RNA sequence: GGGAACGACUCGAGUAGAGUCGAAAAUAGCCAUUUCAAACAUUAUCAUGGCUGAUAUUUUCCGUAGUCAGGUUUAAUGUUUUAAAAGUGCUGUGGGAAAGUGAACAAAGAGUUCCGUAAGCGUUGAAUACCUGCACCAUUUCGAUGGUGCAGGUAUAAAAGAAACAACAACAACAAC
Reactivity to DMS in 0.01 (KOAc 150mM, MgCl2 10mM, bicine 150mM(pH8.5), 24C), signal-to-noise 2, nucleotides 027 to 126: u010a050g020c010c020a180u010u000u010c160a020a020a050c040a010u000u000a020u000c050a040u000g000g010c000u010g000a070u020a050u000u020u000u010c160c230g030u000a030g020u010c020a050g010g010u030u000u000a020a020u000g020u020u000u010u010a020a020a060a090g020u000g020c000u000g010u010g000g010g000a100a040a060g020u020g020a050a040c060a120a110a090g020a180g030u000u000c010c050g050u010a110a130g010c130g000u000u010g020a120